[RMDB]
RNA sequence: GGGAACGACUCGAGUAGAGUCGAAAACAACCUGUGCUGCACGCCUACCACGAAAACGUGGACGUGAUGCUCUCGGAAGCGGCGAACGGCACUGCUUUCGACGCGUGCCUUGGCGCGCCAACGCUACCAUGCUCCUGAGGUUCGCCUCAGGAGCAUGAAAAGAAACAACAACAACAAC
Reactivity to 2A3 in 0.01 (KOAc 150mM, MgCl2 10mM, bicine 150mM(pH8.5), 24C), signal-to-noise 5, nucleotides 027 to 126: c050a010a060c000c000u010g060u080g030c040u070g050c000a000c000g080c020c030u110a100c030c000a010c010g110a100a150a140a130c040g020u010g000g000a000c010g010u020g010a110u090g010c000u030c030u050c060g030g020a050a020g010c030g030g000c080g060a110a090c050g030g010c020a040c130u110g000c000u070u120u130c060g040a090c100g000c000g000u020g030c000c010u070u150g110g010c060g010c010g010c040c010a050a020c040g020c040u010a050c000
Reactivity to DMS in 0.01 (KOAc 150mM, MgCl2 10mM, bicine 150mM(pH8.5), 24C), signal-to-noise 1, nucleotides 027 to 126: c070a040a130c040c010u020g020u030g000c090u010g000c060a010c060g000c150c020u020a250c000c060a020c000g010a150a170a090a180c030g000u000g000g000a190c000g000u000g000a060u000g000c050u010c060u000c030g010g000a050a060g030c110g040g050c050g000a080a120c190g000g070c040a030c000u040g000c080u000u000u080c180g000a100c190g000c030g000u000g020c000c010u000u000g010g010c160g000c000g040c050c050a010a210c030g000c030u050a070c070

This 177-nucleotide RNA was probed chemically with 2A3 and DMS. It was measured as part of the RMDB library OK1LIB. In probing experiments dimethyl sulfate is read out at A N1 and C N3, which are open when not base-paired.